About this RNA
Chemical mapping of a 177-nucleotide RNA with 2A3 and DMS. For 2A3 the reverse transcriptase was SuperScript II with manganese. For DMS the reverse transcriptase was MarathonRT. Reactivities are given for positions 27 through 126. Source: RMDB libraries RFM100 and RFMREP, as collected in RNAgym.
RNA sequence: GGGAACGACUCGAGUAGAGUCGAAAAUAUGUAAGAUUAAAAUGGUUGAUGAAGCCUUGAAUCUCUUCACAGAAAUGCAUUGCAAACCCAAUACAGUAUCUUACAACACUCUUAUUGAUGGAUUCUGACCAAACUAUUCUUUCGAGAAUAGUUUGGUAAAAGAAACAACAACAACAAC
Reactivity to 2A3 in 0.01 (KOAc 150mM, MgCl2 10mM, bicine 150mM(pH8.5), 24C), signal-to-noise 6, nucleotides 027 to 126: u250a050u050g000u000a000a010g000a030u080u130a040a040a080a200u090g030g000u020u030g020a150u060g060a070a010g000c000c000u020u010g040a060a050u010c020u000c000u140u100c090a060c010a080g100a040a080a010u080g020c020a030u010u120g010c020a020a040a120c010c010c000a010a010u110a060c040a030g060u040a010u020c000u020u000a000c010a060a040c030a040c030u060c030u120u170a140u130u170g090a110u080g040g070a090u030u000c010u040g040
Reactivity to DMS in 0.01 (KOAc 150mM, MgCl2 10mM, bicine 150mM(pH8.5), 24C), signal-to-noise 4, nucleotides 027 to 126: u010a070u010g000u000a010a030g010a020u000u030a020a090a050a140u000g000g010u010u000g000a070u010g020a180a180g000c020c030u000u000g000a050a020u010c040u000c010u010u000c250a110c220a060g000a010a030a030u000g000c000a010u000u000g010c010a030a070a160c250c080c010a010a030u000a060c050a020g020u010a020u000c000u000u000a010c020a060a070c140a070c050u000c060u010u010a120u010u010g000a100u000g000g000a120u000u000c010u000g010